RNA sequence: GGGAACGACUCGAGUAGAGUCGAAAAGUAUUUAGGUAGCAGGCAUAUAAUUUUAUUACACCAGACAUUAUGAUUAUAUUUGGCUGUAAACUGUUCUUUCUUGCAAGAUUGGCAGAGAAUGUAAAGAAUAUAGGUACUGAUUCGUCAGUACCUAUAUAAAAGAAACAACAACAACAAC
Reactivity to DMS in 0.01 (KOAc 150mM, MgCl2 10mM, bicine 150mM(pH8.5), 24C), signal-to-noise 5, nucleotides 027 to 126: g000u010a030u000u010u010a060g010g010u010a090g010c030a040g010g010c050a040u010a040u010a030a040u010u020u000u000a090u010u000a100c060a080c070c070a070g000a060c080a030u010u000a040u000g000a100u000u000a030u000a040u010u010u000g010g010c130u000g000u000a030a070a160c060u010g000u000u000c050u000u000u000c040u000u000g030c160a060a060g010a090u010u010g010g010c030a030g000a080g010a040a050u000g000u010a050a050a100g010a090
Reactivity to 2A3 in 0.01 (KOAc 150mM, MgCl2 10mM, bicine 150mM(pH8.5), 24C), signal-to-noise 2, nucleotides 027 to 126: g040u030a110u140u140u120a060g030g010u010a000g030c010a000g070g000c040a020u060a020u020a080a070u110u110u080u110a120u070u060a020c040a060c020c040a000g040a060c020a040u040u090a060u220g010a000u070u180a030u110a000u100u060u080g030g000c020u020g030u040a040a090a090c020u010g020u080u160c020u040u060u020c010u020u050g000c000a010a100g010a160u050u130g020g000c040a020g000a020g010a150a010u090g010u170a120a050a050g040a080
Annotation:
The record gives the reactivity of an RNA of 177 nucleotides to DMS and 2A3. The data come from the RNA Mapping Database (RMDB), library OK2TRN. Values are in units of 0.01, from 0 to 300, in steps of 10. The DMS profile rests on 6,939 reads.